This 177-nucleotide RNA was probed chemically with 2A3 and DMS.

RNA sequence: GGGAACGACUCGAGUAGAGUCGAAAAACAUAUGGUACGCCAUAUGAGCGCGAUGAGGAUUGAUAACACAUACACACACUCUGAAGUUAUGUGAAGAGAUAAUUGAAGAACGGAUAUCUGAGCGCAAGGAAAAUAUCAUGUUCGCAUGAUAUUUUCCAAAAGAAACAACAACAACAAC
Reactivity to 2A3 in 0.01 (KOAc 150mM, MgCl2 10mM, bicine 150mM(pH8.5), 24C), signal-to-noise 9, nucleotides 027 to 126: a000c000a000u010a010u010g000g000u050a040c250g060c040c000a000u000a010u010g050a050g000c010g000c010g120a200u080g020a030g060g020a030u050u070g060a050u120a190a020c020a000c000a020u050a030c050a000c000a000c010a020c100u110c080u150g130a140a030g030u070u020a030u030g040u020g040a080a040g060a010g030a070u110a140a090u130u150g120a060a040g040a110a040c050g060g030a030u030a020u100c010u020g020a020g000c010g000c010a010a030
Reactivity to DMS in 0.01 (KOAc 150mM, MgCl2 10mM, bicine 150mM(pH8.5), 24C), signal-to-noise 7, nucleotides 027 to 126: a140c010a010u000a010u000g000g010u020a090c250g010c000c000a010u000a000u000g010a140g020c000g030c010g000a120u020g000a090g000g000a040u010u000g000a150u030a090a130c040a020c030a020u010a030c140a080c080a110c200a140c160u020c100u020g010a150a080g000u000u000a010u010g010u000g000a100a090g010a130g000a090u010a050a070u010u020g020a110a080g010a070a070c160g000g020a090u010a040u000c010u000g000a110g010c020g000c010a130a120
Source: RMDB libraries RFM100 and RFMREP, as collected in RNAgym. The RNA was probed in 150 mM KOAc, 10 mM MgCl2 and 150 mM bicine (pH 8.5) at 24 C.